Source: RMDB library 15KLIB, as collected in RNAgym. The record gives the reactivity of an RNA of 170 nucleotides to DMS and 2A3. 2A3 adducts were read by reverse transcription with SuperScript II with manganese. Values cover nucleotides 27 to 129.
RNA sequence: GGGAACGACUCGAGUAGAGUCGAAAAUUUUAAUAAACCACUCAUUGAGUGGCCACUUACUGAGUAUGAUUUUACUGAUUAUAAGGUACAACUCUUUGAGAAGUACUUUAAAUAUUGGGAUCAGACGACACAUUAGCGUUCGCGCUAAUGAAAAGAAACAACAACAACAAC
Reactivity to DMS in 0.01 (KOAc 150mM, MgCl2 10mM, bicine 150mM(pH8.5), 24C), signal-to-noise 9, nucleotides 027 to 129: u030u010u040u030a090a110u050a050a070a170c000c000a030c030u000c000a180u060u090g010a000g000u000g020g010c050c020a100c170u030u040a080c110u010g030a180g030u020a010u030g000a020u030u010u050u060a110c040u000g000a040u010u010a240u030a010a010g010g000u010a000c010a020a300c010u010c040u050u030u090g010a000g000a050a300g010u000a020c040u030u030u000a020a110a100u030a020u020u030g000g000g000a000u000c020a000g000a040c020g010a080c140a090
Reactivity to 2A3 in 0.01 (KOAc 150mM, MgCl2 10mM, bicine 150mM(pH8.5), 24C), signal-to-noise 9, nucleotides 027 to 129: u030u040u020u060a090a070u090a060a050a020c010c000a000c000u010c040a300u130u300g010a010g000u010g000g030c000c000a130c010u160u250a070c050u060g040a020g050u050a030u080g040a050u030u030u040u150a070c000u000g020a010u010u040a030u020a100a000g010g000u010a010c010a030a050c020u010c000u070u160u300g020a030g000a030a000g000u000a000c000u010u010u020a020a080a020u160a020u020u020g010g000g010a000u000c000a010g030a040c030g040a020c020a000

Overview
DMS adducts were read by reverse transcription with MarathonRT.